RNA sequence: GGGAACGACUCGAGUAGAGUCGAAAAUGCAGUCUUCAUCAGAAUGGCAGCCUGGCCAAUCUAUGCCUAGGCUCUACAAAAUCCAAACCAUGUGUAUGGAAAAGUGUGAGCUUCUUAACUAUGGUCACAUAUUAUCGAACUUCGGUUCGAUAAUAUGAAAAGAAACAACAACAACAAC
Reactivity to DMS in 0.01 (KOAc 150mM, MgCl2 10mM, bicine 150mM(pH8.5), 24C), signal-to-noise 8, nucleotides 027 to 126: u010g010c030a060g010u000c020u000u010c090a090u010c150a070g010a070a060u000g000g020c060a060g010c070c070u000g010g000c030c040a050a140u010c100u000a060u000g000c120c050u000a070g000g010c000u000c020u000a030c020a040a070a120a140u000c010c010a030a110a050c010c030a110u000g020u010g030u000a080u000g000g010a030a040a060a180g010u000g010u000g000a040g000c010u000u000c070u000u000a090a080c110u010a080u000g010g010u000c110a160
Reactivity to 2A3 in 0.01 (KOAc 150mM, MgCl2 10mM, bicine 150mM(pH8.5), 24C), signal-to-noise 8, nucleotides 027 to 126: u090g000c010a010g020u020c020u050u060c040a120u050c020a040g080a170a060u070g050g000c010a010g040c010c020u020g030g000c010c010a050a040u060c040u090a080u130g020c010c010u020a020g010g000c000u000c000u010a000c010a000a120a020a050u000c010c010a050a020a030c010c020a130u200g140u070g020u140a040u040g020g030a030a060a030a060g050u100g050u020g060a010g000c010u080u030c020u130u110a080a080c040u060a040u180g040g010u070c020a010